Chemical mapping of a 177-nucleotide RNA with 2A3 and DMS.
RNA sequence: GGGAACGACUCGAGUAGAGUCGAAAAUCCGCAGCAUUCGUGCUGCGGAACUUACCGAGGUUGUUGCUCGGUAUAACAACAAAACCCUUGGAAACAAGGGAUACAAUGAGCUAUUCGUAGCUCAUAACAAAAGUUCUUUAUUCGUAAAGAACUUUUGAAAAGAAACAACAACAACAAC
Reactivity to 2A3 in 0.01 (KOAc 150mM, MgCl2 10mM, bicine 150mM(pH8.5), 24C), signal-to-noise 1, nucleotides 027 to 126: u000c000c000g020c000a010g030c000a000u050u060c120g050u020g020c010u010g000c000g000g000a000a000c000u030u020a020c010c000g000a010g100g020u130u060g060u140u150g180c020u000c010g000g010u020a000u050a000a000c030a000a010c020a030a090a020a110c010c000c040u000u030g010g000a020a050a000c010a020a000g000g020g000a010u040a020c010a010a080u030g000a000g000c010u000a010u070u080c100g070u050a010g010c030u000c000a010u030a000a010
Reactivity to DMS in 0.01 (KOAc 150mM, MgCl2 10mM, bicine 150mM(pH8.5), 24C), signal-to-noise 4, nucleotides 027 to 126: u010c000c010g010c010a000g000c000a020u000u000c190g040u000g030c000u000g020c010g000g000a010a010c100u000u000a060c000c010g010a030g000g020u010u000g010u000u000g010c000u010c000g010g010u000a020u000a070a070c130a070a090c150a090a050a130a100c000c000c000u010u000g000g000a190a090a200c000a010a010g000g020g010a070u010a030c180a120a020u000g000a010g010c000u000a030u000u020c230g020u010a000g010c000u000c000a010u000a060a160
For DMS, 3,819 sequencing reads were counted. For 2A3 the reverse transcriptase was SuperScript II with manganese. For 2A3, 1,735 sequencing reads were counted. It was measured as part of the RMDB library M2PK50.